Source information
This 177-nucleotide RNA was probed chemically with 2A3 and DMS. The DMS profile rests on 1,085 reads. The 2A3 profile rests on 683 reads. Conditions: 150 mM KOAc, 10 mM MgCl2 and 150 mM bicine (pH 8.5), 24 C.
RNA sequence: GGGAACGACUCGAGUAGAGUCGAAAAAGCGUCAGCCGAAUACAGACGGUUGGGGUUAUAAGCUCGGUGAAGUCGUGCGAAGCACACCCUAACGCUUAAUGGCGAGGAAAGAUUCGUAGAGGUACGGGUUGCGGAUACCAUUCGUGGUAUCCGCAACAAAAGAAACAACAACAACAAC
Reactivity to 2A3 in 0.01 (KOAc 150mM, MgCl2 10mM, bicine 150mM(pH8.5), 24C), signal-to-noise 2, nucleotides 027 to 126: a000g170c130g300u020c020a040g000c000c000g060a090a000u140a210c050a060g090a050c000g040g010u010u010g000g000g000g010u000u050a200u020a280a020g000c000u020c010g040g000u090g090a080a020g010u020c000g010u020g000c000g020a050a000g010c040a020c000a050c050c030c010u030a090a020c000g000c020u000u160a040a020u220g090g010c010g000a050g020g000a100a100a000g100a020u000u070c060g000u050a070g010a010g080g070u200a020c080g030g000
Reactivity to DMS in 0.01 (KOAc 150mM, MgCl2 10mM, bicine 150mM(pH8.5), 24C), signal-to-noise 1, nucleotides 027 to 126: a030g000c000g000u000c050a050g000c000c000g000a050a010u060a200c300a130g110a050c110g000g000u000u000g030g000g000g020u000u000a020u080a230a110g000c020u000c000g030g090u020g000a060a050g000u000c000g000u010g000c030g000a060a130g000c060a250c150a020c080c030c000u090a150a180c070g000c010u010u000a060a000u070g000g000c110g000a030g020g020a080a000a000g000a070u000u000c000g000u000a000g000a190g000g000u050a070c030g000g000